The record gives the reactivity of an RNA of 177 nucleotides to 2A3 and DMS. For DMS the reverse transcriptase was MarathonRT. The DMS profile rests on 1,144 reads. Conditions: 150 mM KOAc, 10 mM MgCl2 and 150 mM bicine (pH 8.5), 24 C.
[RMDB]
RNA sequence: GGGAACGACUCGAGUAGAGUCGAAAAGCAAAUAAGAUUUAGGGGAAGAAGAUGACAACCUUCUCGCGGUCUUCCCUGUUACGUGUGUAGACACAAUGAAUGUCAUCAAAACUUAAUAUACAAAAAAGACUUAUUAGAUCUUCGGAUCUAAUAAGUCAAAAGAAACAACAACAACAAC
Reactivity to 2A3 in 0.01 (KOAc 150mM, MgCl2 10mM, bicine 150mM(pH8.5), 24C), signal-to-noise 1, nucleotides 027 to 126: g020c010a100a020a120u220a220a010g030a130u140u120u140a000g000g010g000g000a000a010g000a060a050g000a010u010g000a000c000a010a040c010c000u000u090c030u000c030g070c030g000g000u000c000u010u010c000c000c000u000g030u030u150a080c070g000u060g000u010g090u170a120g060a140c000a000c010a090a000u070g040a020a010u010g010u010c010a000u000c000a010a120a000a000c010u080u090a160a040u180a150u050a290c050a030a170a030a030a000a000
Reactivity to DMS in 0.01 (KOAc 150mM, MgCl2 10mM, bicine 150mM(pH8.5), 24C), signal-to-noise 2, nucleotides 027 to 126: g000c100a090a050a090u010a130a130g010a280u000u000u000a080g030g000g010g000a000a000g000a280a170g010a000u010g020a010c050a100a030c030c010u000u000c010u000c010g000c250g000g000u000c000u010u000c000c000c010u020g000u010u000a060c150g020u000g000u010g010u020a110g000a040c000a000c020a090a000u010g000a030a110u020g010u000c000a010u000c000a120a070a100a140c150u020u010a080a030u010a100u020a130c020a000a050a070a060a070a080